Structure probing data (2A3 and DMS) for a 177-nucleotide construct. The 2A3 profile rests on 13,501 reads. The data come from the RNA Mapping Database (RMDB), library OK2TST. Values cover nucleotides 27 to 126.

[RMDB]
RNA sequence: GGGAACGACUCGAGUAGAGUCGAAAACACAAUCAUGUCAAAGGUCGCACUCCCUCCUAGUCAAGUACUCUCAUGGUUGAGGGUCAGUGGGUCAGAGAUGGCAAUUGAUGAGGCUUUCAUGAUCAUGCGUUACAAGAUACUUCGGUAUCUUGUAACGAAAAGAAACAACAACAACAAC
Reactivity to 2A3 in 0.01 (KOAc 150mM, MgCl2 10mM, bicine 150mM(pH8.5), 24C), signal-to-noise 7, nucleotides 027 to 126: c070a000c010a030a060u060c020a030u060g070u090c060a080a050a050g050g010u020c010g020c060a030c040u020c010c000c010u010c010c020u040a050g090u060c030a080a020g020u040a060c020u030c010u020c040a040u140g300g020u110u090g060a010g000g000g000u000c010a010g020u040g040g040g010u050c050a000g020a010g010a070u080g020g000c020a050a150u100u110g060a100u070g020a150g050g000c000u030u070u060c020a040u040g040a040u060c030a050u220g070
Reactivity to DMS in 0.01 (KOAc 150mM, MgCl2 10mM, bicine 150mM(pH8.5), 24C), signal-to-noise 6, nucleotides 027 to 126: c070a130c160a070a040u000c050a030u000g010u000c110a060a080a080g020g000u000c040g020c050a100c070u000c040c010c010u000c040c050u000a090g020u010c100a110a100g020u010a040c030u000c020u000c020a050u010g020g010u010u000g010a030g010g000g000u000c050a100g020u010g020g010g010u010c050a020g010a150g000a080u010g000g010c070a060a080u000u010g000a110u010g000a060g010g010c050u000u010u000c040a040u010g000a030u000c080a090u010g020